Source information
The record gives the reactivity of an RNA of 207 nucleotides to DMS and 2A3. 2A3 adducts were read by reverse transcription with SuperScript II with manganese. Conditions: 150 mM KOAc, 10 mM MgCl2 and 150 mM bicine (pH 8.5), 24 C.
[RMDB]
RNA sequence: GGGAACGACUCGAGUAGAGUCGAAAAAGCGUAGCGGUACGCCGCUACGCAAGGCGCAUUUGAACUGUAUUGUACGCCUUGCAUAAAGCAAAAGUACUAAAAAAACGUGCCGUUACGACGACACGAAAAAACAUCCAUUGGUUCGCCAAUGGAUGAACUUUGUAUGAAAGUUCGCUUUCAUACAAAGAAAAGAAACAACAACAACAAC
Reactivity to DMS in 0.01 (KOAc 150mM, MgCl2 10mM, bicine 150mM(pH8.5), 24C), signal-to-noise 2, nucleotides 027 to 156: a090g040c000g010u000a010g010c030g040g020u000a070c130g010c020c050g030c020u000a020c020g030c000a000a000g000g000c000g030c020a070u010u000u000g000a070a190c130u010g000u000a290u000u010g050u000a030c000g010c000c000u010u000g030c020a140u000a090a060a140g000c030a080a120a080a130g000u000a300c110u000a000a010a050a040a040a070a180c040g030u000g000c020c000g030u000u000a060c180g010a110c050g010a110c020a030c030g000a000a020a050a110a100a070c000a040u000c000c000a000u000u000g000g030u000u000c300g030c020c010a010a020u010g010g000a000u000g000a010a070
Reactivity to 2A3 in 0.01 (KOAc 150mM, MgCl2 10mM, bicine 150mM(pH8.5), 24C), signal-to-noise 8, nucleotides 027 to 156: a000g040c000g000u000a000g000c000g000g000u020a010c100g030c030c040g000c010u010a010c010g000c000a000a000g000g000c010g000c020a060u060u090u260g130a230a130c120u120g070u230a140u180u090g030u070a030c010g000c000c010u000u000g000c010a040u110a210a160a040g020c030a020a030a070a050g110u110a110c140u280a050a060a050a020a010a010a040c010g000u000g000c000c000g000u010u010a030c120g010a020c000g010a010c050a010c070g110a140a020a000a000a010a010c010a000u000c000c000a000u000u000g020g000u040u050c160g040c080c000a000a000u010g000g000a000u000g000a000a000